Source information
Structure probing data (2A3 and DMS) for a 177-nucleotide construct. 2A3 adducts were read by reverse transcription with SuperScript II with manganese. For DMS the reverse transcriptase was MarathonRT. Reactivities are given for positions 27 through 126. The RNA was probed in 150 mM KOAc, 10 mM MgCl2 and 150 mM bicine (pH 8.5) at 24 C.

RNA sequence: GGGAACGACUCGAGUAGAGUCGAAAAGCGCACGCACGCGCGGUCCUGGCACCGUUAUCUGGAGCCCUCACCCGGGGCCAUCGCCAUGGUGGUCUACACGUCCGGCACCACCGGGCCGCCCAAAGGCCAGUCCUAGUACUUUCGAGUACUAGGACUGAAAAGAAACAACAACAACAAC
Reactivity to 2A3 in 0.01 (KOAc 150mM, MgCl2 10mM, bicine 150mM(pH8.5), 24C), signal-to-noise 3, nucleotides 027 to 126: g010c010g000c010a030c050g170c030a030c110g030c040g000c000g000g000u010c020c040u030g010g000c050a040c040c030g070u110u100a100u170c100u120g060g010a040g030c020c010c020u040c040a060c010c010c010g000g000g010g030c020c020a060u070c030g030c050c040a090u230g010g020u030g010g000u000c050u070a040c080a020c090g080u050c060c000g010g010c080a030c030c020a020c040c000g000g000g000c010c010g000c000c000c000a060a080a010g040g030c020
Reactivity to DMS in 0.01 (KOAc 150mM, MgCl2 10mM, bicine 150mM(pH8.5), 24C), signal-to-noise 4, nucleotides 027 to 126: g020c050g010c010a070c170g010c150a090c150g020c040g030c040g010g010u010c040c020u000g010g010c050a080c030c030g000u000u010a070u010c110u010g000g020a150g020c020c010c050u000c110a120c050c020c030g000g000g000g000c010c040a040u000c060g000c060c050a080u000g010g020u010g000g000u010c050u000a090c070a120c120g000u000c040c040g000g020c110a070c060c060a090c010c010g000g000g010c010c090g020c010c010c030a060a080a120g000g000c110